[RMDB]
RNA sequence: GGGAACGACUCGAGUAGAGUCGAAAACGGUUGUUUUCCACCAGGGGGUCGACCUUUUCUAGGGUGUGAAGGCAAAGGUCAUCUUCUUCUGCAUCCAUAAAGGUAAUUGGUUUGUAAGUGUAGGUCAAAUUUCUAUGUGUUUCGACACAUAGAAAUUAAAAGAAACAACAACAACAAC
Reactivity to DMS in 0.01 (KOAc 150mM, MgCl2 10mM, bicine 150mM(pH8.5), 24C), signal-to-noise 8, nucleotides 027 to 126: c110g010g010u000u010g010u000u000u010u000c030c040a090c070c060a100g010g000g010g010g010u010c090g010a050c020c000u010u000u000u010c140u010a130g020g010g020u010g010u010g010a040a030g000g020c180a050a040a050g020g010u010c150a080u010c030u000u000c010u000u000c020u010g040c020a030u000c010c010a090u010a030a060a050g000g000u010a060a100u010u000g010g010u000u000u010g010u000a040a090g010u010g010u000a040g000g000u000c080a070
Reactivity to 2A3 in 0.01 (KOAc 150mM, MgCl2 10mM, bicine 150mM(pH8.5), 24C), signal-to-noise 2, nucleotides 027 to 126: c000g070g000u000u010g020u010u050u060u040c020c030a050c000c010a060g030g020g010g000g050u110c030g030a040c010c000u020u000u050u040c060u130a070g000g000g050u050g030u030g040a040a020g020g030c130a130a030a040g030g020u160c020a100u050c010u070u030c000u050u000c020u060g010c010a020u000c020c010a010u080a050a060a010g040g000u030a090a100u060u040g050g030u070u070u060g060u060a080a070g010u010g070u130a030g010g050u030c040a020
Description
Chemical mapping of a 177-nucleotide RNA with DMS and 2A3. Conditions: 150 mM KOAc, 10 mM MgCl2 and 150 mM bicine (pH 8.5), 24 C. 2A3 adducts were read by reverse transcription with SuperScript II with manganese. For DMS the reverse transcriptase was MarathonRT. In probing experiments dimethyl sulfate is read out at A N1 and C N3, which are open when not base-paired. The 2A3 profile rests on 2,424 reads. It was measured as part of the RMDB library OK2TST.